This 177-nucleotide RNA was probed chemically with 2A3 and DMS. It was measured as part of the RMDB library TTRDES.

[RMDB]
RNA sequence: GGGAACGACUCGAGUAGAGUCGAAAAGAUAUGGAAGAGCGAUGUGGGAGCUGACGGAUCGGAAACGAUCCGUUUAGCGAGGAUCACAUUCGCUCUUCCUAAGUCAAAAGCUCCGUUCGCGGAGCAAGAUACUGAUACUCUUCGGAGUAUCAGUAUCAAAAGAAACAACAACAACAAC
Reactivity to 2A3 in 0.01 (KOAc 150mM, MgCl2 10mM, bicine 150mM(pH8.5), 24C), signal-to-noise 2, nucleotides 027 to 126: g010a000u060a020u150g020g010a010a020g010a000g010c010g000a010u000g000u020g000g000g020a030g000c010u000g000a000c000g000g000a000u000c000g000g030a040a080a030c010g000a000u000c010c010g000u010u010u070a000g000c000g020a240g020g000a010u030c010a000c000a020u110u080c010g010c010u000c000u010u010c000c000u000a010a000g000u000c010a000a000a050a070g000c010u010c030c000g030u060u080c300g020c030g110g000a010g000c000a000a010
Reactivity to DMS in 0.01 (KOAc 150mM, MgCl2 10mM, bicine 150mM(pH8.5), 24C), signal-to-noise 5, nucleotides 027 to 126: g000a040u010a300u000g000g000a020a010g010a020g040c000g010a030u000g000u000g000g000g000a030g040c000u010g000a010c000g000g000a000u010c000g010g010a130a120a210c010g000a010u000c000c000g000u000u000u000a020g020c000g000a080g010g000a040u010c000a010c010a010u010u010c010g010c000u000c000u010u000c000c000u010a000a080g010u010c040a100a110a170a210g000c010u000c000c000g030u010u010c230g010c020g010g000a020g020c010a030a010
Description
For DMS, 10,367 sequencing reads were counted.